[RMDB]
RNA sequence: GGGAACGACUCGAGUAGAGUCGAAAAGUGCAACCAGAAACUCUCGAAGGGUAGCAGAUGAAAGGAACACUUGAGGAAGAGGGUGAGAGACAUGAUGGCCCCUGUCCAGGCGUGCGCACCUGUCCAGCGUCAUAUGAUUCUUCGGAAUCAUAUGACGAAAAGAAACAACAACAACAAC
Reactivity to DMS in 0.01 (KOAc 150mM, MgCl2 10mM, bicine 150mM(pH8.5), 24C), signal-to-noise 3, nucleotides 027 to 126: g000u010g040c070a110a130c060c040a100g010a140a090a070c060u000c020u000c060g020a120a120g000g000g000u000a080g030c070a060g010a120u000g020a040a080a070g010g000a070a070c080a040c060u010u000g000a100g000g010a050a050g010a080g000g020g000u000g000a070g010a080g000a060c060a050u000g000a100u000g000g000c030c020c030c040u000g010u010c050c030a030g010g010c070g010u010g010c060g020c030a040c050c020u000g000u010c040c080a150g010
Reactivity to 2A3 in 0.01 (KOAc 150mM, MgCl2 10mM, bicine 150mM(pH8.5), 24C), signal-to-noise 2, nucleotides 027 to 126: g060u080g010c010a040a030c000c000a020g070a080a120a030c050u060c020u040c090g080a100a090g070g020g000u060a020g000c070a030g020a100u100g060a090a040a010g020g020a080a020c030a010c060u060u100g040a050g030g020a060a000g060a040g010g050g010u020g000a050g000a010g000a020c020a070u110g030a050u080g090g030c010c020c010c000u000g030u040c020c010a000g000g040c010g030u060g010c010g000c010a020c010c000u030g020u030c000c020a020g020